[RMDB]
RNA sequence: GGGAACGACUCGAGUAGAGUCGAAAAGUUGUUGAAAAAUGACCUGAGAGCAUGAGGCGAGACCCGUAGCGCAGGGCAAAACUUCCACGGGCAACUGUGGGACGGCUCUGUAAAAAAGGAGAGGGAGUUAAUUCCGAACGUUCGCGUUCGGAAUUAAAAAAGAAACAACAACAACAAC
Reactivity to DMS in 0.01 (KOAc 150mM, MgCl2 10mM, bicine 150mM(pH8.5), 24C), signal-to-noise 1, nucleotides 027 to 126: g000u000u000g000u000u030g000a060a000a040a150a130u010g000a120c010c000u000g010a100g000a010g010c000a060u010g010a060g060g020c060g000a040g000a130c030c020c030g000u020a110g010c120g040c010a000g000g000g000c050a070a020a020a060c300u030u000c000c020a010c000g000g000g020c300a050a170c010u030g000u000g000g010g040a000c060g000g020c000u020c000u070g000u000a000a000a040a070a100a060g030g020a080g020a130g030g000g000a150g000